[RMDB]
Chemical mapping of a 177-nucleotide RNA with DMS and 2A3.
RNA sequence: GGGAACGACUCGAGUAGAGUCGAAAAGAUAUGGACCUUGAACUACUUCUGCCUGCUCGUUGAAAUCGGAAACGAUGGAGAGCAGAUGAAGCAAGGUCCUAAGUCAAAAGCCUCGUUCGCGAGGCAAUCUGCGGUAAGAGUUCGCUCUUACCGCAGAAAAAGAAACAACAACAACAAC
Reactivity to DMS in 0.01 (KOAc 150mM, MgCl2 10mM, bicine 150mM(pH8.5), 24C), signal-to-noise 1, nucleotides 027 to 126: g010a060u000a300u010g000g010a000c010c010u000u010g000a050a010c090u030a300c000u000u000c000u010g070c250c000u000g010c010u010c040g000u000u000g000a130a060a000u000c000g010g000a060a100a100c010g000a010u000g000g000a040g000a000g020c050a010g000a030u000g000a000a000g020c000a010a000g000g010u010c000c000u000a010a110g000u000c040a090a080a090a070g000c000c010u000c000g000u020u000c150g040c010g000a010g010g020c000a020a020
Reactivity to 2A3 in 0.01 (KOAc 150mM, MgCl2 10mM, bicine 150mM(pH8.5), 24C), signal-to-noise 1, nucleotides 027 to 126: g050a020u070a060u130g060g000a000c010c020u030u020g020a090a010c080u170a110c020u300u000c010u010g160c000c000u020g000c010u010c000g300u300u030g010a050a070a030u000c020g010g020a120a030a000c020g000a030u030g010g050a110g020a000g010c000a000g010a000u080g020a000a000g010c020a030a000g000g000u020c000c000u020a020a000g010u000c020a000a000a070a220g000c000c010u000c000g040u070u070c240g020c020g070a000g000g050c000a000a000

The reactions ran in a buffer of 150 mM KOAc, 10 mM MgCl2 and 150 mM bicine (pH 8.5), at 24 C.
The data come from the RNA Mapping Database (RMDB), library TTRDEL.